[RMDB]
RNA sequence: GGGAACGACUCGAGUAGAGUCGAAAAGUAGAGCCCUUUCUACAUCUAUGCAAAUGUCUCAGAUGGUUCACGCACUUACCGCAGGUAUUGAUGGGAUCGUUGGGGGCGUUAUGGGUGCUGAGAUUGCAAAUGGGUGCUAUUUCGAUAGCACCCAUUUAAAAGAAACAACAACAACAAC
Reactivity to 2A3 in 0.01 (KOAc 150mM, MgCl2 10mM, bicine 150mM(pH8.5), 24C), signal-to-noise 1, nucleotides 027 to 126: g080u050a020g010a040g050c010c010c060u000u090u000c010u020a020c010a070u070c030u120a110u130g020c040a130a000a000u060g020u000c000u010c040a010g010a030u080g000g060u040u030c090a060c150g050c020a030c000u020u030a040c000c020g230c240a150g090g000u030a070u110u120g130a140u130g060g050g000a010u040c000g000u020u030g030g040g030g020g000c040g000u010u010a020u050g000g000g040u030g000c030u030g010a000g020a100u030u050g020c010
Reactivity to DMS in 0.01 (KOAc 150mM, MgCl2 10mM, bicine 150mM(pH8.5), 24C), signal-to-noise 3, nucleotides 027 to 126: g020u010a060g010a100g000c060c050c040u010u000u000c030u000a100c040a090u000c030u000a060u030g000c150a090a080a050u010g020u010c010u000c030a080g020a040u000g010g000u000u020c040a080c090g020c100a070c130u000u000a050c020c050g020c190a110g040g010u010a040u000u000g010a100u010g010g000g000a040u000c020g030u010u000g000g000g010g000g010c050g000u010u000a040u000g010g010g020u000g000c040u010g010a070g010a050u000u010g020c150